RNA sequence: GGGAACGACUCGAGUAGAGUCGAAAAAACUUGGCAAUUUGAAUAUCGAAAUUGUCACGAUAUCGAUAUCAGACAAAAUAGACGCAUUCACCGCCGAUUGAGCUGUUUUUUGCCGUAUAACCAGCCAAAUCAGUUCCCGUGAUCGGAUGAAGGCCAACCUGAUACUAAAUUUCGAUUUAGUAUCAGGAAAAGAAACAACAACAACAAC
Reactivity to 2A3 in 0.01 (KOAc 150mM, MgCl2 10mM, bicine 150mM(pH8.5), 24C), signal-to-noise 4, nucleotides 027 to 156: a000a020c050u040u020g000g000c020a050a050u040u040u100g060a200a070u150a080u210c060g060a010a040a070u070u060g070u110c040a020c070g040a060u060a060u120c060g030a020u030a020u120c050a030g050a070c060a050a070a040a040u170a090g080a090c070g000c050a030u060u070c030a040c050c050g030c030c010g040a030u020u120g000a030g010c030u020g060u080u010u010u020u070u080g040c020c020g040u080a050u030a190a080c050c040a000g000c000c010a000a020a090u060c010a020g010u000u000c030c040c080g040u100g030a050u060c020g040g030a060u070g040a060a030g050g000c070c000a010a030
Reactivity to DMS in 0.01 (KOAc 150mM, MgCl2 10mM, bicine 150mM(pH8.5), 24C), signal-to-noise 2, nucleotides 027 to 156: a060a020c060u000u000g040g030c000a090a080u000u000u010g030a130a100u010a040u000c020g010a050a080a100u010u000g010u020c090a120c120g020a120u000a100u000c020g030a080u000a060u000c040a130g020a080c040a040a040a080a090u000a130g020a060c040g000c040a080u000u000c030a110c080c120g030c040c050g020a080u000u020g010a060g000c020u000g010u000u000u000u000u000u000g050c010c030g000u000a080u010a050a090c110c020a100g030c020c050a050a020a070u000c040a090g030u010u000c010c060c040g010u000g030a030u000c040g000g010a080u000g010a080a090g010g030c010c040a060a220
Chemical mapping of a 207-nucleotide RNA with 2A3 and DMS. The reactions ran in a buffer of 150 mM KOAc, 10 mM MgCl2 and 150 mM bicine (pH 8.5), at 24 C.